Source: RMDB library M2PK90, as collected in RNAgym. The record gives the reactivity of an RNA of 177 nucleotides to 2A3 and DMS. High DMS reactivity at an A or C suggests that its Watson-Crick edge is free. DMS adducts were read by reverse transcription with MarathonRT. Reactivities are given for positions 27 through 126.
RNA sequence: GGGAACGACUCGAGUAGAGUCGAAAAUUAACUAGCGUAGGGAACCAAGCAAAGAGGUAAGAAAUCCCACGGUAGAAGGCUUGGUUCGCGCCCGAGGAAGAAGAAGUCCCACUCCCUACGCCACAAAACAUAUCUAACGUUUCGACGUUAGAUAUGUAAAAGAAACAACAACAACAAC
Reactivity to 2A3 in 0.01 (KOAc 150mM, MgCl2 10mM, bicine 150mM(pH8.5), 24C), signal-to-noise 5, nucleotides 027 to 126: u080u030a070a050c100u030a030g000c000g000u000a010g010g000g010a010a020c000c010a010a010g000c020a040a110a090g120a100g060g030u130a120a070g080a140a130a030u050c020c000c010a020c030g060g030u080a080g030a160a020g060g000c000u020u040g020g010u030u030c030g000c020g010c030c010c010g030a050g060g020a050a080g020a060a010g060a040a000g070u020c000c020c000a010c010u030c000c000c010u000a000c000g010c020c000a060c040a030a100a020
Reactivity to DMS in 0.01 (KOAc 150mM, MgCl2 10mM, bicine 150mM(pH8.5), 24C), signal-to-noise 6, nucleotides 027 to 126: u000u000a100a130c080u000a120g010c000g030u000a020g010g010g000a020a050c020c020a020a020g010c030a090a110a080g010a090g000g010u000a060a080g000a080a090a110u000c020c000c010a110c140g020g010u010a060g010a090a100g010g010c010u010u010g010g010u000u000c030g010c140g000c040c020c020g000a100g010g010a080a060g010a070a070g000a070a100g000u000c010c000c010a120c100u000c010c000c000u000a010c010g000c010c180a040c180a050a070a070